RNA sequence: GGGAACGACUCGAGUAGAGUCGAAAAGUUAGGUGAGGCGGCUACACGAACAUAGGCCACUGACCCCGAACGUCGAGAGACGCCCCGGGUCAGGACAGCUCUUCCCGGCGUAAGGGUUGAGCCCAGGUAUCACCCUGGCUAUUCGUAGCCAGGGUAAACAGUAUUUCUGAUUCGUCAGAAAUACUGUAAAAGAAACAACAACAACAAC
Reactivity to 2A3 in 0.01 (KOAc 150mM, MgCl2 10mM, bicine 150mM(pH8.5), 24C), signal-to-noise 2, nucleotides 027 to 156: g060u070u060a040g000g070u040g030a030g010g060c040g010g000c050u110a050c050a020c090g080a120a000c020a110u170a090g020g060c020c000a030c010u000g010a010c000c000c000c000g030a030a010c000g010u000c000g010a000g000a000g000a120c010g050c010c010c040c000g000g000g000u000c000a000g010g000a020c050a000g000c000u000c000u040u000c020c000c000g040g010c060g050u120a070a130g000g000g000u010u030g010a000g010c000c020c010a040g010g060u100a080u240c020a030c010c000c000u000g000g000c010u020a050u100u130c250g040u040a000g000c000c000a000g000g000g000u000a000a010
Reactivity to DMS in 0.01 (KOAc 150mM, MgCl2 10mM, bicine 150mM(pH8.5), 24C), signal-to-noise 2, nucleotides 027 to 156: g010u000u000a050g020g040u010g010a080g020g030c040g030g020c030u000a060c050a120c090g020a060a080c110a120u000a130g020g030c010c000a120c010u000g010a040c030c000c000c060g000a020a020c010g000u000c000g010a300g020a300g030a040c000g030c010c010c030c210g000g000g020u000c000a000g000g000a100c080a060g000c010u000c010u010u000c000c000c010g030g010c160g030u000a070a100g010g010g020u000u000g010a090g010c010c000c020a120g010g030u000a060u000c070a090c000c000c000u000g000g010c000u000a030u000u010c190g050u000a020g000c000c000a040g010g000g030u000a000a010
Description
Chemical mapping of a 207-nucleotide RNA with 2A3 and DMS. Conditions: 150 mM KOAc, 10 mM MgCl2 and 150 mM bicine (pH 8.5), 24 C. Source: RMDB library M2RFPK, as collected in RNAgym. For DMS, 4,133 sequencing reads were counted.